[RMDB]
RNA sequence: GGGAACGACUCGAGUAGAGUCGAAAAGAUAUGGAAAUUUCAGUAGCAAGGAAAGACCAUCGGAAACGAUGGUACUUCUGAUGACCUACUGAGAAUUUCCUAAGUCAAACCGACGUUCGCGUCGGAAGUUUUAUCGUGUCUUCGGACACGAUAAAACAAAAGAAACAACAACAACAAC
Reactivity to DMS in 0.01 (KOAc 150mM, MgCl2 10mM, bicine 150mM(pH8.5), 24C), signal-to-noise 1, nucleotides 027 to 126: g010a040u000a300u040g000g000a020a000a000u020u000u000c000a060g000u000a000g020c000a090a160g000g000a040a000a010g000a110c000c000a000u000c020g010g000a190a120a110c000g010a000u000g010g060u000a000c020u000u010c000u010g020a140u000g010a110c300c000u000a010c000u000g000a100g010a020a000u000u000u000c000c010u050a000a130g000u000c060a090a130a180c010c000g000a020c040g020u000u010c250g000c020g020u000c000g000g000a010a030
Reactivity to 2A3 in 0.01 (KOAc 150mM, MgCl2 10mM, bicine 150mM(pH8.5), 24C), signal-to-noise 1, nucleotides 027 to 126: g000a020u070a020u150g000g000a000a010a010u020u000u000c010a010g020u020a020g000c060a290a300g020g000a090a030a000g050a020c000c000a000u000c000g000g100a120a040a040c020g020a000u040g010g010u000a030c010u030u010c000u010g150a300u050g050a010c000c000u000a020c000u020g000a030g140a030a030u020u000u000c000c000u010a210a020g080u020c080a100a080a110c030c000g020a020c010g060u090u160c300g000c020g130u000c000g030g050a030a000
An RNA of 177 nucleotides, treated with DMS and 2A3 and read out base by base.
The reactions ran in a buffer of 150 mM KOAc, 10 mM MgCl2 and 150 mM bicine (pH 8.5), at 24 C.
The 2A3 profile rests on 1,537 reads.
For DMS, 839 sequencing reads were counted.
It was measured as part of the RMDB library TTRDES.